[RMDB]
RNA sequence: GGGAACGACUCGAGUAGAGUCGAAAAGAUAUGGAUGUGUGUAGCUUUUGACGCGUUGUAUUCGGAAACGAAUAUUAACGCGAUAAGCUAGACACAUCCUAAGUCAAAACACUCCUUCGGGAGUGAACUUCAGUAACACCUUCGGGUGUUACUGAAGAAAAGAAACAACAACAACAAC
Reactivity to DMS in 0.01 (KOAc 150mM, MgCl2 10mM, bicine 150mM(pH8.5), 24C), signal-to-noise 2, nucleotides 027 to 126: g010a060u000a300u000g000g030a020u000g030u000g010u000g000u000a000g000c000u000u010u010u000g020a190c060g000c000g010u000u000g040u000a020u000u000c010g000g020a140a070a230c020g010a010a010u010a000u000u050a000a000c000g020c000g000a060u000a010a020g000c000u020a020g000a020c000a010c000a000u000c000c000u020a020a040g000u000c000a090a070a150a290c020a020c000u000c020c000u000u030c190g030g010g000a020g020u000g000a000a110
Reactivity to 2A3 in 0.01 (KOAc 150mM, MgCl2 10mM, bicine 150mM(pH8.5), 24C), signal-to-noise 2, nucleotides 027 to 126: g040a030u040a030u160g020g010a000u010g020u000g000u010g050u000a010g000c030u040u080u150u300g230a140c010g000c020g000u010u000g000u000a000u010u000c000g000g030a030a030a090c020g000a010a030u020a010u090u300a040a020c010g020c000g000a010u010a010a000g000c010u020a020g080a010c000a020c000a010u000c000c000u000a010a010g010u000c010a030a000a130a130c010a000c000u010c000c000u070u180c300g140g000g000a000g010u030g010a070a040

Source information
Chemical mapping of a 177-nucleotide RNA with DMS and 2A3. 2A3 adducts were read by reverse transcription with SuperScript II with manganese. It was measured as part of the RMDB library TTRDES. The 2A3 profile rests on 3,100 reads. For DMS, 1,419 sequencing reads were counted. In probing experiments dimethyl sulfate is read out at A N1 and C N3, which are open when not base-paired. Conditions: 150 mM KOAc, 10 mM MgCl2 and 150 mM bicine (pH 8.5), 24 C.